[RMDB]
RNA sequence: GGGAACGACUCGAGUAGAGUCGAAAAGAGCCACAUACCUACCCAAGGUGAAAGCUCCUUCUCUCGCUAUGUGUAACUCAUGAUUCUCAUGACCCCUGGUUGGAGAGAUCCGGACUAGGAGCCAGGGAAAGCCGCUGCCGAUUCGUCGGCAGCGGAACCCUUAUUUGUACUUCGGUACAAAUAAGGGAAAAGAAACAACAACAACAAC
Reactivity to 2A3 in 0.01 (KOAc 150mM, MgCl2 10mM, bicine 150mM(pH8.5), 24C), signal-to-noise 1, nucleotides 027 to 156: g010a000g040c040c000a000c010a010u040a020c000c000u000a000c000c000c020a030a040g010g030u090g030a230a140a020g130c090u110c000c010u040u030c000u000c010u000c010g040c220u020a020u010g000u040g030u080a150a060c000u010c020a030u130g140a200u160u010c060u010c020a020u190g130a150c020c000c000c010u000g030g020u000u080g000g000a020g000a000g000a050u070c050c040g030g020a040c050u030a010g020g000a010g000c000c000a000g000g000g010a050a060a030g000c000c000g070c080u000g040c010c000g050a030u040u050c050g070u000c000g110g030c000a000g000c000g000g000a000a010